[RMDB]
RNA sequence: GGGAACGACUCGAGUAGAGUCGAAAAAUCUAUUAAAGAACAUGUCACAUACGCGAAACAAUUAUUUGACGUUGUUCAAUUUUCACCUGAAGAUGCAACGCGUACUGAAUUACCAUUCUUAGUGAAAACUCACACUUAGGUUCGCCUAAGUGUGAGUAAAAGAAACAACAACAACAAC
Reactivity to DMS in 0.01 (KOAc 150mM, MgCl2 10mM, bicine 150mM(pH8.5), 24C), signal-to-noise 2, nucleotides 027 to 126: a050u050c070u010a120u000u030a100a130a060g000a040a030c030a060u000g000u000c040a060c150a170u000a010c170g000c030g010a110a070a160c130a030a050u000u000a090u000u000u030g000a060c080g000u010u010g010u060u010c040a030a030u000u000u000u000c020a050c080c140u020g000a030a010g000a060u020g020c110a070a150c030g030c030g010u010a040c170u000g010a070a060u010u010a110c150c020a180u000u010c020u000u010a110g030u000g000a050a050a070
Reactivity to 2A3 in 0.01 (KOAc 150mM, MgCl2 10mM, bicine 150mM(pH8.5), 24C), signal-to-noise 1, nucleotides 027 to 126: a000u140c040u030a120u090u300a220a070a130g000a010a040c010a030u130g010u040c000a010c010a070u070a060c040g070c060g060a100a150a060c020a090a180u210u110a050u070u100u070g000a010c070g010u040u050g010u010u080c000a010a020u050u000u030u080c070a110c010c000u100g060a020a000g060a000u050g000c000a060a120c070g050c020g030u050a070c060u040g100a140a150u200u080a100c030c000a010u070u070c020u010u020a020g000u000g080a000a000a000